[RMDB]
The record gives the reactivity of an RNA of 177 nucleotides to 2A3 and DMS. Source: RMDB library M2PK90, as collected in RNAgym.
RNA sequence: GGGAACGACUCGAGUAGAGUCGAAAAAUAAAUAAGCCCGGAUAGCUCAGUCGGUAGAGCAUCAGCCUUUUAAGCUGAGGGUCGAGCGUUCGAGACGCUCUUCGGGCGCCAAAUAAAGCUAAAAAAAACAAUCUUUACGAUUCGUCGUAAAGAUUGUAAAAGAAACAACAACAACAAC
Reactivity to 2A3 in 0.01 (KOAc 150mM, MgCl2 10mM, bicine 150mM(pH8.5), 24C), signal-to-noise 1, nucleotides 027 to 126: a010u070a010a040a010u120a150a010g000c000c000c000g020g000a010u010a020g010c010u010c030a030g090u180c110g200g210u210a030g000a000g040c020a000u000c010a000g020c000c030u200u300u120u300a030a020g000c020u000g010a010g070g020g000u020c010g000a010g020c010g000u020u010c020g000a000g000a020c000g000c030u000c050u000u000c000g000g000g030c010g000c010c000a120a040a000u190a060a090a050g050c080u160a120a110a010a000a000a020a000
Reactivity to DMS in 0.01 (KOAc 150mM, MgCl2 10mM, bicine 150mM(pH8.5), 24C), signal-to-noise 2, nucleotides 027 to 126: a060u010a070a070a080u010a140a280g000c000c000c010g020g000a020u000a130g010c000u010c010a050g000u010c120g020g040u020a030g010a020g000c010a060u000c000a010g020c010c020u000u000u000u000a100a210g000c010u000g000a010g030g010g000u010c040g010a020g000c000g010u000u000c050g010a300g000a060c020g000c000u000c010u000u000c010g030g000g000c000g000c050c050a030a080a090u000a080a060a080g000c190u020a000a000a010a040a050a040a110
The DMS profile rests on 1,254 reads. Conditions: 150 mM KOAc, 10 mM MgCl2 and 150 mM bicine (pH 8.5), 24 C. Values cover nucleotides 27 to 126.